This 177-nucleotide RNA was probed chemically with DMS and 2A3. The data come from the RNA Mapping Database (RMDB), library OK2TRN. The RNA was probed in 150 mM KOAc, 10 mM MgCl2 and 150 mM bicine (pH 8.5) at 24 C.
RNA sequence: GGGAACGACUCGAGUAGAGUCGAAAAUGUUGGGCUAGUCACUAUCUUUUAUGGGAAAAGUGUGUUGAAUUGAAUCACCCUAUUAUUGUGUUAGAAGAUGAUUCUUUACUACAAGAUAACUUUAUAGUCAUAGUAGAGAGUUCGCUCUCUACUAUGAAAAAGAAACAACAACAACAAC
Reactivity to DMS in 0.01 (KOAc 150mM, MgCl2 10mM, bicine 150mM(pH8.5), 24C), signal-to-noise 6, nucleotides 027 to 126: u010g010u000u000g020g000g020c060u000a090g010u010c040a060c040u000a100u010c020u000u000u000u000a130u020g020g010g010a050a060a050a070g010u000g020u000g010u000u000g000a060a050u000u000g000a070a060u000c030a050c030c010c010u000a100u000u010a120u010u010g010u000g010u000u000a040g000a070a120g000a060u010g000a070u000u000c010u000u000u000a050c050u000a050c040a030a070g010a090u010a050a070c070u000u000u010a090u010a160g000
Reactivity to 2A3 in 0.01 (KOAc 150mM, MgCl2 10mM, bicine 150mM(pH8.5), 24C), signal-to-noise 2, nucleotides 027 to 126: u080g010u010u140g020g000g050c020u010a060g040u070c000a010c040u030a080u100c010u000u250u060u170a190u280g100g020g000a000a090a050a080g060u060g000u000g030u030u120g090a120a120u040u050g050a060a040u130c030a090c010c030c000u020a040u100u000a120u080u120g060u010g050u060u050a030g020a120a010g010a150u130g000a030u140u030c000u000u010u040a070c040u000a010c000a030a060g030a180u070a170a060c010u120u110u110a240u200a120g110
About this RNA: For 2A3, 792 sequencing reads were counted.